[RMDB]
RNA sequence: GGGAACGACUCGAGUAGAGUCGAAAACAGCAGGAAUCGCGGCUGAAGGUCGCCGACAACACCGGCGCCAAGGAGAUCUUGUGCAUCCGGGUGCUGGGCGGUUCGUCGCGACGCUACGCCGGCAUCGACUAGGGUGCUGAUUCGUCAGCACCCUAGUAAAAGAAACAACAACAACAAC
Reactivity to 2A3 in 0.01 (KOAc 150mM, MgCl2 10mM, bicine 150mM(pH8.5), 24C), signal-to-noise 1, nucleotides 027 to 126: c030a000g140c030a000g060g070a140a030u160c130g030c000g180g000c050u080g020a110a030g230g000u040c010g000c140c090g050a000c000a000a000c020a020c000c020g060g000c020g000c000c000a060a160g080g000a100g000a050u100c050u180u300g100u200g100c000a070u000c000c000g000g000g020u000g000c020u020g030g070g000c140g080g000u060u070c070g000u020c050g000c000g000a000c010g040c020u020a000c010g000c000c040g020g000c020a010u070c040g030
Reactivity to DMS in 0.01 (KOAc 150mM, MgCl2 10mM, bicine 150mM(pH8.5), 24C), signal-to-noise 2, nucleotides 027 to 126: c060a170g020c160a110g000g000a090a030u020c160g020c030g020g000c000u010g020a150a210g010g000u000c010g030c040c060g000a030c000a050a030c030a110c000c010g000g030c240g020c000c000a070a130g020g010a070g000a140u020c130u000u010g010u010g010c150a150u000c010c030g000g010g040u000g000c000u000g020g010g000c120g020g040u000u010c110g000u000c020g000c010g010a000c090g000c020u010a140c300g000c000c030g010g000c030a060u000c020g010
Description
The record gives the reactivity of an RNA of 177 nucleotides to 2A3 and DMS. For DMS, 1,488 sequencing reads were counted. As a SHAPE reagent, 2A3 marks flexible, mostly unpaired nucleotides at the ribose 2'-OH. For 2A3 the reverse transcriptase was SuperScript II with manganese. It was measured as part of the RMDB library OK2TRN.